[RMDB]
RNA sequence: GGGAACGACUCGAGUAGAGUCGAAAAGCGUCGGCGCAGGGCCGCGUGGGCGGCAUCUCGGUCCAUUCCGCCACCCUGCGGGCGACCCGGGGGGUGCUCUGAUAGUCUCGCGUGCCCAAGGCCCGUGUGCGUUUUGAAACUUCGGUUUCAAAACGCAAAAAGAAACAACAACAACAAC
Reactivity to DMS in 0.01 (KOAc 150mM, MgCl2 10mM, bicine 150mM(pH8.5), 24C), signal-to-noise 1, nucleotides 027 to 126: g000c070g040u000c090g000g000c000g020c250a260g000g030g000c010c040g240c050g010u060g000g000g000c000g050g040c010a150u000c140u000c030g000g000u000c010c120a300u000u000c000c040g000c030c040a010c300c060c160u090g030c010g000g000g000c150g150a050c140c030c300g000g000g000g000g010g000u030g000c000u000c100u070g000a210u130a100g000u000c000u000c060g000c170g000u010g070c020c000c020a060a170g000g000c000c000c060g030u050g000
Reactivity to 2A3 in 0.01 (KOAc 150mM, MgCl2 10mM, bicine 150mM(pH8.5), 24C), signal-to-noise 2, nucleotides 027 to 126: g030c020g090u120c070g020g090c030g000c040a030g000g000g010c000c000g000c010g020u170g040g020g000c010g000g020c050a080u030c080u030c030g050g000u040c050c030a040u160u000c000c000g030c030c010a060c030c000c010u000g030c070g010g000g010c060g040a100c060c000c030g060g010g030g010g000g000u060g020c020u040c090u120g100a180u140a250g000u000c020u000c000g010c020g020u140g010c000c000c000a060a040g000g000c000c010c000g000u010g010